RNA sequence: GGGAACGACUCGAGUAGAGUCGAAAACGAGGGCGUGGGACGGGCAGCCUCGAACGCGGCCGAUUCAUUGGGCCGCAAGAUCACCGAGUGGCGGCAGCCCUCGAAGUGACGGCCCCUCUGCUACGUACAUGCAAUAAUGCUUCGGCAUUAUUGCAUGAAAAGAAACAACAACAACAAC
Reactivity to 2A3 in 0.01 (KOAc 150mM, MgCl2 10mM, bicine 150mM(pH8.5), 24C), signal-to-noise 2, nucleotides 027 to 126: c030g010a080g030g120g020c070g050u140g030g020g040a040c050g020g040g000c030a030g060c010c030u050c040g060a080a030c090g010c000g000g000c000c010g050a090u140u110c090a140u170u240g060g010g000c000c000g000c010a010a000g000a080u050c010a010c040c010g010a030g000u260g020g000c020g070g070c080a050g000c000c000c010u000c000g010a040a000g000u020g000a010c020g050g000c010c000c000c000u030c010u030g030c030u050a090c000g020u030a040
Reactivity to DMS in 0.01 (KOAc 150mM, MgCl2 10mM, bicine 150mM(pH8.5), 24C), signal-to-noise 4, nucleotides 027 to 126: c050g010a080g010g000g000c090g010u000g010g010g000a050c080g020g010g010c020a060g020c010c020u010c060g010a100a100c230g000c010g010g010c000c010g010a110u000u000c230a220u010u000g010g010g010c010c000g000c010a010a030g010a160u010c040a040c060c020g010a040g000u010g020g030c020g010g030c300a100g000c010c000c010u000c010g010a070a050g010u000g000a050c090g020g010c010c000c020c060u000c020u000g010c020u000a050c050g010u010a190